[RMDB]
Notes:
The data come from the RNA Mapping Database (RMDB), library POS240. Structure probing data (2A3 and DMS) for a 307-nucleotide construct.
RNA sequence: GGGAACGACUCGAGUAGAGUCGAAAACAACAAAAGGGGGCGUCACGGCUUCGACGGAGAUGCUUGCGGCCAAGAGGCAUGCCGGGGUGCACACACCCGUAAUCGCGUGCAAAACAACAAUUGCCAACCAAACACUGGCAUACGCAGCUUAAUUAAUUAAGUUGCCGUUCUCCGCAGCUUCGCCCGUGGGCUGCGAGCGAACGUCGAACUGCGGGCUGGUCUUCCCGGCUACGUCUGGGCUGGGAGGAUGAGACUUUCAGGCUAAAAGCACUCGUUUCGACGAGUGCAAAAGAAACAACAACAACAAC
Reactivity to 2A3 in 0.01 (KOAc 150mM, MgCl2 10mM, bicine 150mM(pH8.5), 24C), signal-to-noise 4, nucleotides 027 to 266: c010a020a010c010a040a140a050a090g030g030g000g010g010c030g000u060c030a040c080g040g010c070u060u050c040g020a020c020g030g100a150g010a030u150g040c030u040u050g010c030g020g000c020c020a110a050g090a110g050g010c010a010u060g020c030c010g010g010g000g010u080g030c020a010c010a000c010a030c040c020c000g040u110a060a070u090c120g000c010g020u030g020c020a030a100a030a070c110a050a020c040a070a080u150u040g010c010c000a030a050c040c070a150a080a020c060a040c120u020g000g000c000a000u070a050c060g010c000a010g000c010u040u010a030a050u170u110a060a180u030u020a130a050g010u010u010g000c010c020g000u020u000c010u010c020c020g030c020a020g000c020u130u140c070g010c030c030c000g020u050g040g000g000c010u000g000c000g000a010g000c020g010a020a010c010g020u050c030g020a050a040c000u040g030c050g020g000g000c010u020g030g000u000c010u000u000c000c000c000g000g000c000u020a020c030g020u020c020u050g000g000g010c010u000g010g000g000a000g010g000a000u050g000a010g050a020c050u210u300u300c180a000g000g000c000u050a020a070a020a080
Reactivity to DMS in 0.01 (KOAc 150mM, MgCl2 10mM, bicine 150mM(pH8.5), 24C), signal-to-noise 2, nucleotides 027 to 266: c070a070a160c110a040a040a100a180g000g000g040g010g000c150g030u000c030a080c060g010g000c070u010u000c050g000a040c030g020g010a090g000a300u020g000c050u000u000g020c030g000g040c020c050a170a140g020a200g000g010c010a020u000g000c020c040g030g020g010g020u010g040c020a010c010a060c030a050c010c010c000g000u020a030a030u010c160g000c030g010u000g020c000a190a060a120a110c260a100a120c120a080a120u020u000g000c010c000a040a030c100c050a120a120a150c300a210c090u000g000g000c010a000u020a030c130g000c000a000g010c000u000u000a010a060u020u030a070a110u030u000a000a000g000u010u000g010c020c020g010u000u000c000u000c000c120g000c100a030g010c010u010u000c160g000c010c020c010g050u000g010g000g030c010u000g000c000g000a020g020c060g000a070a060c020g000u000c090g020a050a060c040u010g020c080g020g000g010c010u000g010g000u010c030u000u000c000c020c020g000g000c000u000a010c010g000u000c010u000g000g000g010c000u000g000g010g000a030g000g000a010u000g000a270g010a030c090u000u050u020c010a020g000g000c020u000a010a050a140a160